RNA sequence: GGGAACGACUCGAGUAGAGUCGAAAACAGACGAAGCCUUACAGAUGAGCAAUGGAACCGGAUCGAAGCAUAUCUUCCGGGGCGAGUUGGUACGCCCGGCCGCAGUGGCGUCGAUAACCGAUUAUUAUGGACUACUAUGCUUCGGCAUAGUAGUCCAAAAAGAAACAACAACAACAAC
Reactivity to DMS in 0.01 (KOAc 150mM, MgCl2 10mM, bicine 150mM(pH8.5), 24C), signal-to-noise 1, nucleotides 027 to 126: c050a180g000a060c060g010a070a070g010c080c080u000u000a130c200a010g000a040u000g000a040g000c080a100a150u010g000g000a100a170c080c020g070g010a050u010c020g000a030a040g040c030a060u000a020u000c030u000u010c050c010g030g060g020g000c000g050a090g000u000u020g000g050u010a060c070g000c000c000c030g010g050c160c140g000c100a080g010u000g000g000c020g060u020c030g020a070u000a070a040c010c010g000a130u000u000a050u000u000a160